[RMDB]
Structure probing data (2A3 and DMS) for a 177-nucleotide construct. The data come from the RNA Mapping Database (RMDB), library M2PK50.
RNA sequence: GGGAACGACUCGAGUAGAGUCGAAAAGUUCGACCGUUCGCGGUCGAACAAAAUAAAACAGUACAUAGCCUCGCCAAAGCGUUGUACUGAAAGGCUAAGAAAAAACGAUAUGGUUCGCCAUAUCGAAGCGUAUUUACGACUUCGGUCGUAAAUACGCAAAAGAAACAACAACAACAAC
Reactivity to 2A3 in 0.01 (KOAc 150mM, MgCl2 10mM, bicine 150mM(pH8.5), 24C), signal-to-noise 1, nucleotides 027 to 126: g010u000u010c000g010a010c040c020g000u050u070c300g020c020g000g000u000c040g000a020a010c000a000a000a000a000u000a000a000a000a000c010a000g010u000a000c000a010u050a050g000c030c000u000c060g140c080c060a100a030a040g000c000g020u000u040g000u030a010c020u010g080a020a020a010g110g100c060u130a100a100g130a120a190a050a020a000a000c010g020a010u000a000u000g040g040u010u020c220g040c100c000a000u000a010u030c000g040a030a000
Reactivity to DMS in 0.01 (KOAc 150mM, MgCl2 10mM, bicine 150mM(pH8.5), 24C), signal-to-noise 1, nucleotides 027 to 126: g020u020u000c000g000a020c000c010g040u000u000c300g070c050g000g000u000c000g000a000a010c000a000a110a000a010u000a020a060a080a050c030a000g030u000a000c020a020u000a300g050c000c010u000c260g020c230c240a060a180a230g010c040g040u000u000g050u000a010c000u000g000a060a050a130g000g000c100u010a080a230g000a060a030a050a060a040a090c070g010a000u000a010u000g000g000u000u000c260g000c000c000a000u000a000u010c000g020a000a010
Notes:
For 2A3 the reverse transcriptase was SuperScript II with manganese. The reactions ran in a buffer of 150 mM KOAc, 10 mM MgCl2 and 150 mM bicine (pH 8.5), at 24 C.